[RMDB]
RNA sequence: GGGAACGACUCGAGUAGAGUCGAAAACGAUAGCUGUUCGCAGCUAUCGAAAGGACUACCCGUCAGGGUUAAGGCCAUACGGUCAGCCGGGUCCAAUGCCGAAAAGAGGGUUGUUCGCAACCCUCAAGGCAGUGUAUCCGUUCGCGGAUACACUGCCAAAAGAAACAACAACAACAAC
Reactivity to DMS in 0.01 (KOAc 150mM, MgCl2 10mM, bicine 150mM(pH8.5), 24C), signal-to-noise 1, nucleotides 027 to 126: c010g010a000u000a000g020c000u010g030u000u020c290g030c000a000g010c000u000a000u000c020g020a090a100a150g050g000a020c020u000a030c030c000c000g020u000c290a140g000g010g020u000u010a060a040g010g020c020c030a050u000a140c080g000g000u000c110a120g000c040c000g010g000g020u010c000c000a080a030u000g010c020c000g010a160a040a080a160g010a000g000g010g010u010u000g000u010u010c170g010c000a010a010c000c000c000u010c000a010a030
Reactivity to 2A3 in 0.01 (KOAc 150mM, MgCl2 10mM, bicine 150mM(pH8.5), 24C), signal-to-noise 2, nucleotides 027 to 126: c000g000a000u000a000g000c000u000g020u120u050c300g040c080a010g000c000u010a000u000c000g000a000a020a000g010g000a000c010u020a020c000c000c000g090u190c110a090g070g000g010u100u210a180a290g030g020c000c020a070u070a130c060g040g020u080c010a020g020c030c000g060g000g000u000c020c010a010a010u080g010c010c000g050a090a070a030a000g000a000g000g020g000u010u020g000u020u090c200g020c110a000a010c020c000c000u000c020a020a000